[RMDB]
The record gives the reactivity of an RNA of 207 nucleotides to 2A3 and DMS. Reactivities are given for positions 27 through 156. For 2A3 the reverse transcriptase was SuperScript II with manganese.

RNA sequence: GGGAACGACUCGAGUAGAGUCGAAAAUGAACUCUUCGGAGUUCAAAAAAGCGUACUACAAGAUCCUUUGAUCAUUUCUACCCACCAUCUUCCCAAAUAGGAAGAUGAGGAAAUGGGAGGAUACCUUGUAUCGCAAAAAGUCCAAUUCGUUGGACAACACUUGUCUUACAUUCGUGUAAGACAAGUGAAAAGAAACAACAACAACAAC
Reactivity to 2A3 in 0.01 (KOAc 150mM, MgCl2 10mM, bicine 150mM(pH8.5), 24C), signal-to-noise 6, nucleotides 027 to 156: u050g000a000a000c000u000c000u060u090c300g100g010a000g000u000u000c030a100a010a000a000a010a010g030c050g030u100a080c050u010a000c030a010a010g000a020u020c010c000u140u130u130g160a150u170c020a010u010u010u000c010u040a120c060c040c040a040c020c000a020u000c000u010u040c010c010c020a220a300a210u240a090g000g010a000a000g010a000u000g010a030g010g010a010a010a000u010g020g010g000a000g000g010a010u060a120c020c010u000u010g000u000a030u240c020g000c000a010a030a020a100a030g010u000c010c000a000a030u100u100c270g070u100u020g000g010a000c010a050a020
Reactivity to DMS in 0.01 (KOAc 150mM, MgCl2 10mM, bicine 150mM(pH8.5), 24C), signal-to-noise 3, nucleotides 027 to 156: u000g000a030a000c000u000c000u000u010c280g060g000a030g020u000u000c010a000a000a030a100a080a140g010c010g000u010a060c090u000a050c010a020a030g020a110u010c010c010u000u010u020g020a100u000c000a010u000u000u000c020u010a040c020c000c050a300c080c000a000u010c010u000u000c000c050c020a040a170a110u010a030g000g010a040a020g010a010u000g000a100g020g000a010a000a030u000g010g000g000a010g020g000a040u000a050c190c030u000u000g000u000a020u000c020g040c000a050a080a050a080a130g010u000c000c000a040a150u010u000c140g050u010u000g010g000a030c010a080a140
The RNA was probed in 150 mM KOAc, 10 mM MgCl2 and 150 mM bicine (pH 8.5) at 24 C. The DMS profile rests on 6,689 reads. DMS adducts were read by reverse transcription with MarathonRT.